[RMDB]
RNA sequence: GGGAACGACUCGAGUAGAGUCGAAAACAUUUCCACCAUCCAUAGGUGCUUACGACGAGGAACAUGAUUUGGCGACCAGCUUGGCCGUAGAGGUCGAGGUCUUGUGGGGUGUGGAAAACACCGCCGAGGAUCAUCGCACAUUCGUGUGCGAUGAUCCAAAAGAAACAACAACAACAAC
Reactivity to DMS in 0.01 (KOAc 150mM, MgCl2 10mM, bicine 150mM(pH8.5), 24C), signal-to-noise 1, nucleotides 027 to 126: c230a190u000u000u000c000c000a060c050c010a000u000c020c010a020u000a050g010g030u000g010c050u000u010a180c000g010a060c080g020a130g000g030a090a100c100a060u000g000a170u000u010u000g020g040c060g000a090c050c000a130g010c190u000u000g030g000c020c010g010u020a090g000a140g000g020u000c020g020a000g000g000u010c020u000u030g030u010g010g000g000g050u010g000u010g010g000a060a020a110a040c100a070c030c030g010c080c050g070a170
Reactivity to 2A3 in 0.01 (KOAc 150mM, MgCl2 10mM, bicine 150mM(pH8.5), 24C), signal-to-noise 1, nucleotides 027 to 126: c040a040u030u060u070c000c000a020c000c000a050u040c020c040a050u030a010g060g000u130g100c020u160u170a170c020g030a010c040g050a110g090g060a100a070c030a100u070g030a140u160u040u160g070g000c000g050a090c000c000a020g210c070u020u120g050g000c040c000g000u000a070g010a050g150g000u000c040g010a000g000g050u030c030u000u120g030u040g000g010g010g010u050g030u060g030g090a000a040a000a000c040a020c040c000g010c040c020g000a050